[RMDB]
RNA sequence: GGGAACGACUCGAGUAGAGUCGAAAACACACUCCCUUCGGGGAGUGUGAAAGAACGCGUGGGACACGCAAGGAGGAGCGUGUGGGACGCGACAAACCCAUAAAAGUGGAUAGUUCGCUAUCCACAAGCUCUCUGUUAGGUUCGCCUAACAGAGAGCAAAAGAAACAACAACAACAAC
Reactivity to DMS in 0.01 (KOAc 150mM, MgCl2 10mM, bicine 150mM(pH8.5), 24C), signal-to-noise 1, nucleotides 027 to 126: c010a000c000a000c000u000c000c000c000u000u000c190g040g020g030g000a050g010u000g040u000g000a030a070a190g000a080a050c000g000c010g030u000g020g000g000a000c020a000c000g000c000a040a110g080g000a300g020g010a130g000c010g000u000g030u030g040g010g000a040c010g000c020g000a040c100a030a130a170c000c000c000a090u020a040a070a130a130g000u000g000g000a000u000a000g000u010u020c200g030c010u020a050u000c000c010a000c000a010a040
Reactivity to 2A3 in 0.01 (KOAc 150mM, MgCl2 10mM, bicine 150mM(pH8.5), 24C), signal-to-noise 3, nucleotides 027 to 126: c000a000c000a000c010u000c000c010c020u000u050c210g020g010g010g000a000g000u010g000u000g000a000a000a010g060a120a040c010g000c000g000u020g030g270g000a000c030a000c020g010c040a040a060g180g080a100g070g040a160g040c010g010u000g000u030g010g120g010a000c010g000c010g000a010c000a000a060a000c020c010c020a040u190a030a110a020a020g000u000g000g010a000u000a000g020u030u080c240g000c130u000a000u010c000c000a000c000a010a010
Background
Chemical mapping of a 177-nucleotide RNA with DMS and 2A3. DMS (dimethyl sulfate) methylates the pairing face of unpaired adenines and cytosines.